[RMDB]
An RNA of 177 nucleotides, treated with 2A3 and DMS and read out base by base. For DMS, 1,651 sequencing reads were counted. The reactions ran in a buffer of 150 mM KOAc, 10 mM MgCl2 and 150 mM bicine (pH 8.5), at 24 C.
RNA sequence: GGGAACGACUCGAGUAGAGUCGAAAACACACCGCGGAACAUCGGCUGAUACCAACGUUGCAGCUCGUGCCUGGUCAGGCGACCAGCGGUGAUGGCCUCGCUGCCGAUGAAGACGUCACCCAUGACGGUGACCUAGUGCUUUCGAGCACUAGGUCACAAAAGAAACAACAACAACAAC
Reactivity to 2A3 in 0.01 (KOAc 150mM, MgCl2 10mM, bicine 150mM(pH8.5), 24C), signal-to-noise 4, nucleotides 027 to 126: c080a000c010a010c010c000g000c020g030g020a170a130c020a110u030c010g080g000c030u020g020a030u050a130c000c040a030a040c040g090u130u170g050c060a050g000c090u060c070g060u060g020c000c040u040g020g040u020c030a060g140g140c070g030a040c000c010a010g000c000g000g000u010g010a050u050g000g000c000c040u050c060g040c070u050g000c020c010g090a100u120g020a020a020g070a030c020g010u010c020a030c010c010c020a070u120g050a030c060g020
Reactivity to DMS in 0.01 (KOAc 150mM, MgCl2 10mM, bicine 150mM(pH8.5), 24C), signal-to-noise 2, nucleotides 027 to 126: c090a120c090a030c000c080g000c020g000g000a110a100c160a210u020c030g020g000c000u020g010a140u000a110c120c030a100a030c050g030u010u020g000c080a070g000c050u020c030g000u030g030c030c010u020g030g050u000c050a130g000g000c100g000a040c070c020a070g000c000g000g040u000g000a110u000g010g010c050c000u000c170g010c200u000g060c010c040g060a000u000g000a100a040g000a180c060g040u030c000a020c000c060c040a100u020g000a140c020g020